Record summary:
Source: RMDB library OK3TST, as collected in RNAgym. An RNA of 207 nucleotides, treated with 2A3 and read out base by base. The RNA was probed in 150 mM KOAc, 10 mM MgCl2 and 150 mM bicine (pH 8.5) at 24 C.

[RMDB]
RNA sequence: GGGAACGACUCGAGUAGAGUCGAAAAUGCCAAAACCCCGCUAGUGACGGGGAUUCGUGUUGGUUGGACGCACAUGGAGGGAGUGCGAACAAAUCAGGGCGUCCCUCGAAACUCUCCUACGACAGACAAGAGAAGAUAGCCACGGCAGUUGAAGGCGGUGCUUCCUCUUAUUCGUAAGAGGAAGCACAAAAGAAACAACAACAACAAC
Reactivity to 2A3 in 0.01 (KOAc 150mM, MgCl2 10mM, bicine 150mM(pH8.5), 24C), signal-to-noise 1, nucleotides 027 to 156: u050g050c010c000a000a000a090a090c000c000c000c000g010c000u040a060g090u010g130a060c000g000g050g010g000a010u030u090c070g000u030g050u000u070g060g010u010u000g010g000a000c020g000c020a000c000a040u090g130g000a000g040g030g000a030g000u040g010c010g010a060a020c040a040a090a060u090c030a090g000g010g070c030g000u020c000c000c000u010c030g020a070a010a010c080u030c010u010c080c000u050a090c020g110a030c000a010g060a030c030a050a130g000a000g000a090a010g000a050u050a000g000c010c030a060c020g060g020c040a020g020u090u110g070a080a040g030g000c060g010
2A3 adducts were read by reverse transcription with SuperScript II with manganese.